[RMDB]
RNA sequence: GGGAACGACUCGAGUAGAGUCGAAAAGGUGUUUGUAAAUAUAAGGGUAAGUUUGUCCAAAUCCCUGCUCAGUGUGUCCGUGACCCUGUGGGAUUUUGUUUGUCAAAUACCCCCUGUAAUGUCUGUCGAGAGAAUGUACGUUCGCGUACAUUCUCUCAAAAGAAACAACAACAACAAC
Reactivity to DMS in 0.01 (KOAc 150mM, MgCl2 10mM, bicine 150mM(pH8.5), 24C), signal-to-noise 1, nucleotides 027 to 126: g020g000u000g010u000u000u010g010u000a050a030a020u000a070u000a120a140g010g000g010u000a070a130g040u000u000u000g020u000c050c000a030a050a030u010c010c000c000u000g060c230u020c000a010g020u010g020u000g050u000c030c300g010u000g010a030c010c000c010u010g020u000g000g010g000a050u000u000u000u000g020u000u000u010g010u010c010a020a050a020u010a300c070c030c030c000c010u020g000u000a060a090u000g000u000c020u000g010u000c220

The record gives the reactivity of an RNA of 177 nucleotides to DMS. Conditions: 150 mM KOAc, 10 mM MgCl2 and 150 mM bicine (pH 8.5), 24 C. The data come from the RNA Mapping Database (RMDB), library 15KREP.